Structure probing data (2A3 and DMS) for a 177-nucleotide construct. Source: RMDB library RFM100, as collected in RNAgym. The reactions ran in a buffer of 150 mM KOAc, 10 mM MgCl2 and 150 mM bicine (pH 8.5), at 24 C. The 2A3 profile rests on 559 reads.
RNA sequence: GGGAACGACUCGAGUAGAGUCGAAAACUCAGUGCAUCCUUUGGUUCUCCGAGCCGAAAGAAGUCACUAGCUGAAAAAGAGUUUAUACUCUGAUCACACAGUAACAUUGCAAUAAAAGCUUAGCUCGUUUCGGUGAAGGGUUCGCCCUUCACCGAAAAAAAGAAACAACAACAACAAC
Reactivity to 2A3 in 0.01 (KOAc 150mM, MgCl2 10mM, bicine 150mM(pH8.5), 24C), signal-to-noise 1, nucleotides 027 to 126: c000u000c010a000g010u030g050c040a070u000c050c000u150u030u000g070g000u000u090c070u000c010c120g000a000g000c020c020g030a020a000a050g030a060a140g090u150c010a000c000u040a010g010c100u070g030a000a090a000a000a030g040a010g040u080u080u020a130u150a050c000u000c000u000g000a070u130c000a000c000a000c000a040g020u110a120a000c000a100u140u050g040c010a030a040u130a180a200a050a070g000c000u130u060a030g000c000u030c030g020
Reactivity to DMS in 0.01 (KOAc 150mM, MgCl2 10mM, bicine 150mM(pH8.5), 24C), signal-to-noise 1, nucleotides 027 to 126: c080u000c180a130g000u000g040c020a160u010c010c060u030u000u010g000g040u000u000c000u080c080c000g060a000g000c070c010g020a100a090a170g040a150a030g030u060c000a020c080u000a170g010c140u000g000a050a040a080a030a000g000a000g000u000u000u010a110u060a070c000u020c000u000g000a290u000c000a000c010a070c090a020g040u000a010a020c130a140u010u050g020c030a010a070u040a190a010a090a070g000c000u010u000a090g000c020u000c080g000